[RMDB]
RNA sequence: GGGAACGACUCGAGUAGAGUCGAAAAGGUGAUGUUUAUGUUUUAAAUAUAAAUAUCCGUGUUAGAAGGACCAUGUGUGUUUAACACAAGGAAGCGUGAGGCAAUAACAGGUCUGUGAUGCCCUUAGAAAUUCCUCCAUGUUCGCAUGGAGGAAUUUAAAAGAAACAACAACAACAAC
Reactivity to 2A3 in 0.01 (KOAc 150mM, MgCl2 10mM, bicine 150mM(pH8.5), 24C), signal-to-noise 1, nucleotides 027 to 126: g130g000u270g090a040u000g000u000u000u030a050u010g010u000u000u110u120a180a220a080u040a010u000a010a000a000u020a000u010c000c000g000u020g060u100u050a050g040a230a070g000g000a000c000c050a170u030g000u000g000u000g020u020u190u130a130a070c040a020c000a020a050g240g000a050a050g060c120g030u050g030a040g000g120c050a040a000u040a060a030c000a020g050g030u010c020u000g050u020g000a020u100g030c030c000c000u000u030a030g180
Reactivity to DMS in 0.01 (KOAc 150mM, MgCl2 10mM, bicine 150mM(pH8.5), 24C), signal-to-noise 3, nucleotides 027 to 126: g020g000u030g000a010u000g000u000u010u000a020u010g000u000u010u020u030a070a050a050u030a000u000a000a000a000u000a010u000c000c020g000u010g010u000u010a100g010a120a120g010g000a060c010c010a120u000g000u000g010u020g020u000u030u020a100a030c010a010c020a080a110g000g000a070a070g000c120g020u010g000a050g010g010c010a040a060u030a080a040c060a060g000g000u010c000u000g020u010g010a120u050g000c050c000c000u000u010a070g010
An RNA of 177 nucleotides, treated with 2A3 and DMS and read out base by base. It was measured as part of the RMDB library RFM100. DMS adducts were read by reverse transcription with MarathonRT.